This 177-nucleotide RNA was probed chemically with DMS and 2A3. DMS (dimethyl sulfate) methylates the pairing face of unpaired adenines and cytosines. Values cover nucleotides 27 to 126. Source: RMDB library OK1LIB, as collected in RNAgym.
RNA sequence: GGGAACGACUCGAGUAGAGUCGAAAAGGUAAUCCGAAGGGUGUAAUGAUUAGCCAUGAAAAUAUCUGCAAUCAGGUUUCAAACCCUAAAUCCUCUUAUGAUAGUCUUCUUUGCAUUACAACCAUAACAUUAAUCAUUUAUUCGUAAAUGAUUAAUGAAAAGAAACAACAACAACAAC
Reactivity to DMS in 0.01 (KOAc 150mM, MgCl2 10mM, bicine 150mM(pH8.5), 24C), signal-to-noise 8, nucleotides 027 to 126: g020g010u030a060a070u010c040c030g020a100a090g010g000g000u000g010u010a040a080u000g000a050u020u010a110g010c060c100a090u010g000a060a050a090a120u020a070u010c040u020g000c150a070a080u030c090a040g000g010u000u000u010c120a050a090a110c100c030c020u010a050a100a100u010c020c020u010c060u020u010a050u020g000a040u010a070g000u010c060u000u010c020u000u000u010g020c050a050u000u000a020c060a050a100c070c020a060u030a080a160
Reactivity to 2A3 in 0.01 (KOAc 150mM, MgCl2 10mM, bicine 150mM(pH8.5), 24C), signal-to-noise 9, nucleotides 027 to 126: g060g030u080a050a050u050c040c050g030a060a050g060g010g000u050g020u110a060a060u050g070a040u020u090a030g040c040c060a060u130g070a060a060a040a010u190a050u040c020u030g000c020a020a070u050c010a060g010g040u030u150u090c110a150a110a080c000c010c000u030a050a050a030u040c010c010u050c030u090u080a070u120g050a050u060a080g050u030c030u070u020c010u070u110u100g010c010a030u040u060a060c040a070a040c050c030a050u070a130a060